[RMDB]
RNA sequence: GGGAACGACUCGAGUAGAGUCGAAAAGGUCAGGCCUGAUCAGAAACAGCAGCAGGUGAGUCCGCCUUAUGUGAAGGAUCGGCUGAAACACGAGGAAAUACUGAGCCAACGCAAGACGGUAGCCGAAAAAAUCUAGUUCACUUCGGUGAACUAGAAAGUCGUACGUAUAGUUCGCUAUACGUACGACAAAAGAAACAACAACAACAAC
Reactivity to 2A3 in 0.01 (KOAc 150mM, MgCl2 10mM, bicine 150mM(pH8.5), 24C), signal-to-noise 3, nucleotides 027 to 156: g040g000u080c050a020g000g110c000c020u060g020a030u020c050a000g180a070a140a020c020a030g070c000a000g000c000a000g010g000u060g060a060g060u040c060c030g030c010c010u080u090a100u110g070u040g080a060a010g060g010a030u040c010g020g000c000u010g060a080a030a000c060a020c030g040a040g090g070a000a130a000u140a100c070u070g040a030g020c020c010a060a030c060g040c080a020a010g060a020c020g050g010u060a020g010c030c010g030a090a020a000a010a000a030u000c000u000a010g000u010u010c000a020c000u010u030c120g060g000u020g000a000a000c000u000a000g000a000a000a000
Reactivity to DMS in 0.01 (KOAc 150mM, MgCl2 10mM, bicine 150mM(pH8.5), 24C), signal-to-noise 1, nucleotides 027 to 156: g000g010u010c060a080g020g000c010c010u010g100a030u010c110a130g000a140a090a050c070a050g000c080a010g000c010a060g000g020u000g020a190g010u010c020c000g000c010c010u000u020a050u020g050u000g030a060a190g000g020a110u010c010g010g000c000u020g030a160a090a120c000a140c120g000a110g000g010a090a050a060u030a080c050u000g000a190g010c040c010a030a190c050g050c020a040a040g020a100c050g010g020u020a060g040c010c020g030a020a020a070a070a110a030u000c000u000a020g020u010u000c000a000c010u020u020c300g050g010u020g000a020a010c000u000a000g000a010a010a050
The record gives the reactivity of an RNA of 207 nucleotides to 2A3 and DMS. DMS adducts were read by reverse transcription with MarathonRT. Values cover nucleotides 27 to 156. The RNA was probed in 150 mM KOAc, 10 mM MgCl2 and 150 mM bicine (pH 8.5) at 24 C. For 2A3, 1,931 sequencing reads were counted.